[RMDB]
Description: An RNA of 207 nucleotides, treated with 2A3 and DMS and read out base by base. For 2A3 the reverse transcriptase was SuperScript II with manganese. The DMS profile rests on 1,630 reads. DMS adducts were read by reverse transcription with MarathonRT. The 2A3 profile rests on 821 reads. Reactivities are rounded to 0.1 and cut off at 0 and 3. The reactions ran in a buffer of 150 mM KOAc, 10 mM MgCl2 and 150 mM bicine (pH 8.5), at 24 C.
RNA sequence: GGGAACGACUCGAGUAGAGUCGAAAAGUCCGUGAAGAAUUCGGCAUGGAGAAGGACGAAGAGUUCGCUCGCGCCUACAAGUCCGAAGGCGUCGUUGACGAAGAAGGUCGGGAAACCACCAACAUCACCAUCGACGGUAGCGCUCUCAAUGAGACGCAGACUAAACCGAUUUCGAUCGGUUUAGUCUAAAAGAAACAACAACAACAAC
Reactivity to 2A3 in 0.01 (KOAc 150mM, MgCl2 10mM, bicine 150mM(pH8.5), 24C), signal-to-noise 2, nucleotides 027 to 156: g020u000c010c010g020u090g030a080a140g060a090a170u130u070c010g000g020c070a020u090g030g050a070g020a110a040g040g000a030c030g020a100a030g050a000g050u050u070c110g060c040u030c000g040c010g000c000c000u060a110c100a140a020g050u030c020c020g070a030a010g020g000c000g000u070c010g010u080u040g020a040c020g000a000a030g090a030a030g080g060u080c150g100g030g000a070a100a030c020c060a040c000c000a020a050c020a060u150c020a030c010c010a000u050c000g060a020c000g060g000u060a020g000c030g000c000u010c000u020c070a090a210u140g000a000g000a050c000g010c050
Reactivity to DMS in 0.01 (KOAc 150mM, MgCl2 10mM, bicine 150mM(pH8.5), 24C), signal-to-noise 1, nucleotides 027 to 156: g010u000c040c020g110u000g000a140a130g050a060a130u000u000c040g010g000c020a300u000g010g020a000g000a100a010g000g060a060c020g020a080a200g050a220g010u000u000c080g010c000u010c000g020c080g010c000c000u000a010c030a050a100g050u000c030c020g020a120a060g000g030c000g000u000c000g020u000u020g010a060c020g020a050a070g000a090a300g010g000u000c030g150g030g000a080a210a210c000c020a020c040c040a090a040c000a180u010c020a000c010c000a090u020c040g020a040c000g040g010u010a090g010c030g050c080u020c010u010c050a080a100u020g010a070g000a060c000g010c100